[RMDB]
RNA sequence: GGGAACGACUCGAGUAGAGUCGAAAAAAGUGGCGAUAACGGACGUAAAAAUUACGAUGAAGCAUCAGGUAUGCAGCAGGCUUUGAUCGCUAAAGGCGUACCAGCAAAAGUGAUCUUCUGCGACUAACGUAGUGAUGCUCUUCGGAGCAUCACUACGAAAAGAAACAACAACAACAAC
Reactivity to 2A3 in 0.01 (KOAc 150mM, MgCl2 10mM, bicine 150mM(pH8.5), 24C), signal-to-noise 2, nucleotides 027 to 126: a000a000g070u050g030g010c050g010a020u030a010a030c040g050g060a000c020g020u050a000a010a000a160a140u170u050a060c050g050a080u120g050a040a000g000c010a040u090c030a030g090g020u040a000u060g030c050a030g000c000a000g030g050c000u140u080u110g030a060u020c020g020c020u020a160a000a000g170g000c040g020u060a120c030c050a020g000c000a000a030a050a000g070u010g020a040u010c000u020u040c010u070g070c040g060a030c040u030a100a020
Reactivity to DMS in 0.01 (KOAc 150mM, MgCl2 10mM, bicine 150mM(pH8.5), 24C), signal-to-noise 2, nucleotides 027 to 126: a060a070g030u000g000g010c040g000a040u000a080a130c060g010g020a080c050g040u000a010a080a090a070a070u000u010a060c050g000a150u000g000a060a090g000c060a060u010c040a060g000g020u010a010u000g000c080a070g020c030a100g000g020c120u000u000u000g000a030u000c100g000c010u010a030a090a110g000g000c040g030u020a030c100c100a030g020c050a050a050a150a040g000u000g000a030u000c020u010u000c030u000g010c070g010a090c120u010a010a230